[RMDB]
RNA sequence: GGGAACGACUCGAGUAGAGUCGAAAACGUACGUGGAGACACGUACGACGUGACUUCGGUCACGAAUCGAGGCAACUCCUGCGCCUCUCGCGCGAGGCGUCGGUGGUCGGCGAGCCCACGGACGCAAAAACUCGCGCGGAAAUAACUAGCAGGAGAACCUACGGAGUAGUUUCGACUACUCCGUAGGAAAAGAAACAACAACAACAAC
Reactivity to 2A3 in 0.01 (KOAc 150mM, MgCl2 10mM, bicine 150mM(pH8.5), 24C), signal-to-noise 4, nucleotides 027 to 156: c010g000u000a000c000g000u000g000g030a050g010a030c000a000c000g000u010a000c000g000a010c010g020u000g000a000c000u050u040c280g100g010u000c010a000c000g020a030a100u180c080g010a000g000g000c030a120a230c100u000c010c000u000g000c000g000c000c010u010c060u100c010g000c000g000c000g000a020g010g010c020g020u000c070g130g000u020g000g010u030c000g030g150c180g060a040g010c010c000c000a000c010g080g000a000c000g000c000a040a100a100a130a150c010u000c000g000c000g000c000g000g000a010a000a010u110a050a050c240u140a010g010c000a000g000g000a000g000a010a020
Reactivity to DMS in 0.01 (KOAc 150mM, MgCl2 10mM, bicine 150mM(pH8.5), 24C), signal-to-noise 2, nucleotides 027 to 156: c020g050u000a020c000g060u000g000g000a300g000a220c000a000c000g020u000a000c010g010a090c000g030u010g000a020c000u000u000c270g070g000u020c010a000c100g000a100a020u000c090g030a030g000g010c040a130a110c030u000c000c000u000g000c010g000c030c000u000c010u000c030g000c000g000c020g020a010g030g000c000g000u000c000g010g050u030g010g000u000c080g010g000c140g010a280g010c270c000c040a040c010g000g010a020c000g020c170a040a110a120a050a300c000u000c000g020c030g000c000g000g000a040a110a080u000a090a100c090u010a130g000c010a050g000g000a010g020a030a040